[RMDB]
RNA sequence: GGGAACGACUCGAGUAGAGUCGAAAAGUUGCCUCGGUUGAUAAGGCUGGCUCCCUGGCAUGGGAGCGCCGCAUGGGCCAAGUGUGGUAGCCGAAGGGCUAGGCCCGUGACAAAUGGUAUCAGAGCCCCUACGCUUAAUGUUCGCAUUAAGCGUAGGAAAAGAAACAACAACAACAAC
Reactivity to DMS in 0.01 (KOAc 150mM, MgCl2 10mM, bicine 150mM(pH8.5), 24C), signal-to-noise 2, nucleotides 027 to 126: g010u000u000g010c020c020u010c080g020g010u000u000g020a100u000a070a150g020g000c010u010g010g020c000u000c000c010c020u000g020g020c210a110u010g010g000g000a010g010c010g010c020c020g000c030a010u000g000g000g030c020c010a110a120g010u010g010u020g010g000u000a050g010c000c010g020a180a090g010g010g010c000u000a100g000g020c010c000c010g000u000g000a060c100a040a080a100u010g020g010u020a050u010c070a120g010a190g000c030c050
Reactivity to 2A3 in 0.01 (KOAc 150mM, MgCl2 10mM, bicine 150mM(pH8.5), 24C), signal-to-noise 1, nucleotides 027 to 126: g040u040u070g060c000c000u080c070g000g120u060u120g030a060u060a100a060g010g000c000u010g150g050c000u000c000c000c000u020g150g060c100a240u210g000g000g000a000g000c000g000c000c000g000c000a010u000g000g000g040c040c040a110a130g080u160g070u130g180g140u080a000g030c000c030g020a070a080g160g000g000c000u000a000g020g010c000c020c000g000u000g020a020c020a000a120a090u240g100g000u070a060u130c030a050g110a060g160c060c000

An RNA of 177 nucleotides, treated with DMS and 2A3 and read out base by base. The RNA was probed in 150 mM KOAc, 10 mM MgCl2 and 150 mM bicine (pH 8.5) at 24 C. For DMS, 2,483 sequencing reads were counted. Reactivities are given for positions 27 through 126.